Conditions: 150 mM KOAc, 10 mM MgCl2 and 150 mM bicine (pH 8.5), 24 C. Chemical mapping of a 177-nucleotide RNA with 2A3 and DMS. DMS adducts were read by reverse transcription with MarathonRT. The DMS profile rests on 851 reads. The 2A3 profile rests on 986 reads. For 2A3 the reverse transcriptase was SuperScript II with manganese. Values cover nucleotides 27 to 126.

RNA sequence: GGGAACGACUCGAGUAGAGUCGAAAAUCUCGGAGAAAAGCAGAUAAAUCACCUCCAGAGGACCCCUUCAGCGAACAAAGGAGCUCUGAAGCGCGAGGAGUAAGAGCAUAGCGAUAGGGGGAGAUGCCUGUAUAUCAACGUUCGCGUUGAUAUACAGAAAAGAAACAACAACAACAAC
Reactivity to 2A3 in 0.01 (KOAc 150mM, MgCl2 10mM, bicine 150mM(pH8.5), 24C), signal-to-noise 2, nucleotides 027 to 126: u030c010u000c010g050g010a100g000a010a240a100a020g090c080a070g060a280u140a210a200a090u100c050a060c040c020u040c000c010a030g040a040g080g000a130c020c000c040c010u000u040c060a030g000c020g040a000a070c070a110a200a070g110g070a100g060c000u000c030u050g030a120a080g060c050g000c050g160a100g030g030a050g020u020a020a000g010a000g030c050a060u100a000g010c030g020a080u120a030g000g000g010g040g000a010g020a000u040g080c040
Reactivity to DMS in 0.01 (KOAc 150mM, MgCl2 10mM, bicine 150mM(pH8.5), 24C), signal-to-noise 2, nucleotides 027 to 126: u010c010u000c010g000g000a070g010a080a070a130a190g030c090a080g000a160u010a050a120a200u010c030a130c040c020u010c010c010a170g020a050g000g010a130c100c000c000c010u000u000c110a220g010c010g010a050a120c120a070a090a080g010g000a140g010c010u030c010u010g000a130a190g010c050g000c150g020a090g000g020a060g010u030a070a010g010a070g070c010a130u010a140g010c020g000a060u000a020g000g010g050g010g010a040g030a030u020g050c090